Structure probing data (2A3) for a 207-nucleotide construct.
RNA sequence: GGGAACGACUCGAGUAGAGUCGAAAAACAGAAGUGUGAAAGUUCAAGCAAGCUAGCCGGCAAAAAAGCAAACUUGACCACCAAGGAUAAAAGAGAUCUUAUCCAAGGAUGCAAAAGAUAAUCUCACAAAAGCUUCAUUCGUUCGCGAAUGAAGCAAGGAGAAGGAAGUGUUCGCACUUCCUUCUCCAAAAGAAACAACAACAACAAC
Reactivity to 2A3 in 0.01 (KOAc 150mM, MgCl2 10mM, bicine 150mM(pH8.5), 24C), signal-to-noise 1, nucleotides 027 to 156: a000c020a010g070a080a000g020u040g000u030g100a120a010a010g050u110u130c030a050a020g080c010a060a020g000c040u050a060g000c040c060g030g000c220a050a020a040a040a000a000g020c040a100a130a040c000u000u000g030a020c000c010a010c000c000a050a070g020g000a000u030a030a020a010a050g150a010g020a010u010c020u040u040a000u000c030c000a020a030g010g010a030u140g050c030a080a040a040a040g000a030u110a110a050u080c030u020c050a040c030a090a080a000a010g000c010u010u010c000a010u010u000c020g050u060u110c240g000c020g100a000a000u000g020a000a000g000c020a000a020

Background:
The RNA was probed in 150 mM KOAc, 10 mM MgCl2 and 150 mM bicine (pH 8.5) at 24 C. Reactivities are given for positions 27 through 156.